[RMDB]
RNA sequence: GGGAACGACUCGAGUAGAGUCGAAAAACUGCGACAGGGCGGAUGCAUGAAACAAAAUGCAUUUCGGCAAUGCUCUGCGCAUCUACAAACCAGCAGCCGAGAACUGGCGCAGAUAACAAGCGCAGUCAAAUUUAAAAAUAUUCGUAUUUUUAAAUUUAAAAGAAACAACAACAACAAC
Reactivity to 2A3 in 0.01 (KOAc 150mM, MgCl2 10mM, bicine 150mM(pH8.5), 24C), signal-to-noise 4, nucleotides 027 to 126: a010c010u020g000c000g110a090c030a040g020g000g030c040g040g030a000u020g000c000a010u020g080a220a200a080c090a060a130a060a000u020g010c020a000u020u040u040c020g030g010c030a030a090u090g010c010u000c000u010g000c000g000c000a010u030c000u130a140c040a040a110a050c040c030a000g060c030a010g020c030c020g030a040g030a100a020c020u070g120g010c010g000c000a010g030a160u140a090a080c090a150a030g010c010g000c010a010g020u050c020
Reactivity to DMS in 0.01 (KOAc 150mM, MgCl2 10mM, bicine 150mM(pH8.5), 24C), signal-to-noise 4, nucleotides 027 to 126: a120c110u010g000c000g010a150c000a010g000g000g040c030g000g000a090u010g000c000a030u000g000a100a110a130c200a090a090a120a040u000g000c040a060u000u000u020c020g000g010c040a100a150u050g000c030u000c000u000g000c030g030c020a080u010c100u010a070c140a060a090a120c070c030a080g010c080a090g000c040c000g010a050g000a070a080c040u020g000g010c010g010c000a060g010a080u020a070a100c100a120a120g000c010g000c000a010g000u020c040